About this RNA: An RNA of 207 nucleotides, treated with 2A3 and DMS and read out base by base. The DMS profile rests on 2,084 reads. For 2A3 the reverse transcriptase was SuperScript II with manganese. Conditions: 150 mM KOAc, 10 mM MgCl2 and 150 mM bicine (pH 8.5), 24 C. Values cover nucleotides 27 to 156.
RNA sequence: GGGAACGACUCGAGUAGAGUCGAAAACGGAAGCAUUAAAACCAUUCGAGCUAGUCAAUGCGUGGCGUGUCUCUCCGCAGCGUGUUGGCCAAUGUAAAGAGUGACUAAGCAUGUAGUACCGAGGAUGAUAAGAGCAAUUCGUUCGCGAAUUGCUCAACUAGUGAAACGUCUUCGGACGUUUCACUAGAAAAGAAACAACAACAACAAC
Reactivity to 2A3 in 0.01 (KOAc 150mM, MgCl2 10mM, bicine 150mM(pH8.5), 24C), signal-to-noise 3, nucleotides 027 to 156: c040g000g040a080a000g020c020a030u030u090a060a080a030a060c020c000a020u060u080c060g020a020g030c030u070a030g010u010c010a000a010u000g010c000g000u020g060g000c030g000u120g080u050c020u010c020u010c100c000g010c000a010g000c010g000u030g000u000u000g020g000c010c010a140a040u090g040u070a080a080a040g020a030g010u020g020a010c020u050a040a020g050c030a040u030g040u070a060g030u060a080c030c040g010a060g050g000a030u140g040a030u080a220a110g000a010g000c000a000a000u000u000c000g020u030u060c210g000c010g080a000a000u000u000g000c010u000c000a000a000
Reactivity to DMS in 0.01 (KOAc 150mM, MgCl2 10mM, bicine 150mM(pH8.5), 24C), signal-to-noise 1, nucleotides 027 to 156: c000g020g010a180a100g050c010a190u000u020a100a010a130a140c060c040a060u000u010c030g010a160g030c040u000a090g000u000c050a050a020u000g020c050g040u000g020g060c040g020u010g000u010c060u000c060u000c200c020g100c030a060g000c030g000u010g000u000u010g000g020c000c030a030a030u000g000u010a050a050a080g000a070g020u030g010a060c030u010a070a130g010c060a060u000g000u000a110g030u010a080c040c020g000a110g020g010a130u000g010a160u010a090a180g010a010g000c020a050a010u000u000c010g010u010u000c300g000c020g020a010a020u000u000g010c000u000c000a000a040